[RMDB]
RNA sequence: GGGAACGACUCGAGUAGAGUCGAAAAGCCACCCAGUUUACCCGUGGGAGACUGACGGACACGAGCCCUACUAUCCAGUUCCUUCCGGCACCAGAAUAAAUUUUCCUUUUUCCUUUUCCAUGCACGCGUCAGGCCGUGCGUUCGCGCACGGCCUGACAAAAGAAACAACAACAACAAC
Reactivity to 2A3 in 0.01 (KOAc 150mM, MgCl2 10mM, bicine 150mM(pH8.5), 24C), signal-to-noise 1, nucleotides 027 to 126: g050c010c000a060c030c000c000a010g040u100u120u140a180c000c010c000g080u030g020g010g000a050g040a060c030u040g040a030c030g070g050a010c010a000c000g000a000g030c050c020c020u050a020c030u020a050u070c040c040a000g010u060u060c010c050u060u000c060c000g000g070c090a140c020c010a020g140a080a060u280a120a030a050u090u000u020u070c030c000u080u060u000u030u000c000c000u060u050u000u030c000c000a020u140g060c140a020c020g010c080
Conditions: 150 mM KOAc, 10 mM MgCl2 and 150 mM bicine (pH 8.5), 24 C. Structure probing data (2A3) for a 177-nucleotide construct. For 2A3, 516 sequencing reads were counted. It was measured as part of the RMDB library OK1LIB.